Source: RMDB library OK1LIB, as collected in RNAgym. An RNA of 177 nucleotides, treated with DMS and 2A3 and read out base by base.

RNA sequence: GGGAACGACUCGAGUAGAGUCGAAAAGAAAGUGGCCUCGACUGCGGUGGUCGCUGAAAUGCUGGGGCUGACGCGCGAUGAGAUCCUCAACGCGGUAUCGCUGGCGUGGGUGGAUGGGCAGUCGCUGGCUCCGGUAAUGGUUCGCCAUUACCGGAGCAAAAGAAACAACAACAACAAC
Reactivity to DMS in 0.01 (KOAc 150mM, MgCl2 10mM, bicine 150mM(pH8.5), 24C), signal-to-noise 2, nucleotides 027 to 126: g010a070a120a020g030u000g000g000c020c030u010c020g000a160c150u000g020c040g000g010u020g000g130u000c000g000c000u000g000a090a080a060u010g000c060u020g000g000g000g040c060u050g010a050c080g000c030g030c020g000a060u020g010a160g000a180u080c110c010u010c030a110a090c040g000c000g000g000u000a060u000c010g000c000u020g030g020c080g060u000g000g030g020u010g000g000a190u010g000g000g000c130a060g000u000c010g000c040u000g000
Reactivity to 2A3 in 0.01 (KOAc 150mM, MgCl2 10mM, bicine 150mM(pH8.5), 24C), signal-to-noise 3, nucleotides 027 to 126: g130a000a140a030g080u110g020g030c020c000u100c030g090a150c050u100g060c080g090g020u050g030g010u030c010g000c020u010g030a070a080a030u160g000c000u040g000g010g030g060c050u090g000a010c010g030c000g000c000g020a000u020g040a020g030a230u130c050c040u050c030a180a140c050g000c000g000g090u030a070u030c030g010c080u030g020g020c020g000u120g000g060g050u180g020g030a150u160g080g000g000c030a030g020u040c020g020c070u050g070

The reactions ran in a buffer of 150 mM KOAc, 10 mM MgCl2 and 150 mM bicine (pH 8.5), at 24 C. For 2A3 the reverse transcriptase was SuperScript II with manganese. For DMS the reverse transcriptase was MarathonRT.